Conditions: 150 mM KOAc, 10 mM MgCl2 and 150 mM bicine (pH 8.5), 24 C. The record gives the reactivity of an RNA of 207 nucleotides to DMS. DMS adducts were read by reverse transcription with MarathonRT. Source: RMDB library M2RFPK, as collected in RNAgym.
RNA sequence: GGGAACGACUCGAGUAGAGUCGAAAAGUUCCCUCUUAGCGUGGAGGUUUAACUACGCUCGUUCCCCAUAUCGGUGUGGGCGCACCGAAUUUAUAAAUCAAAGUCCUUUAGGGAACGGAAAGGAACAAAAAUCCAUGGGAGUUCGCUCCCAUGGAAAUCAUACCUAGCUCUUCGGAGCUAGGUAUGAAAAAGAAACAACAACAACAAC
Reactivity to DMS in 0.01 (KOAc 150mM, MgCl2 10mM, bicine 150mM(pH8.5), 24C), signal-to-noise 1, nucleotides 027 to 156: g020u000u010c000c000c000u010c090u000u020a080g010c030g060u000g010g000a080g050g010u000u000u010a070a200c020u010a020c040g030c000u000c060g000u000u000c010c000c000c020a160u000a090u000c000g010g000u000g010u000g050g000g060c140g010c000a020c010c000g000a020a060u000u010u000a080u000a020a090a050u010c110a140a110a110g040u020c000c010u010u000u000a160g020g000g030a070a070c050g040g000a050a090a040g010g000a090a140c030a050a070a030a090a190u000c010c010a020u000g000g010g000a040g060u000u010c220g000c000u030c000c000c010a000u010g010g010a000a010a050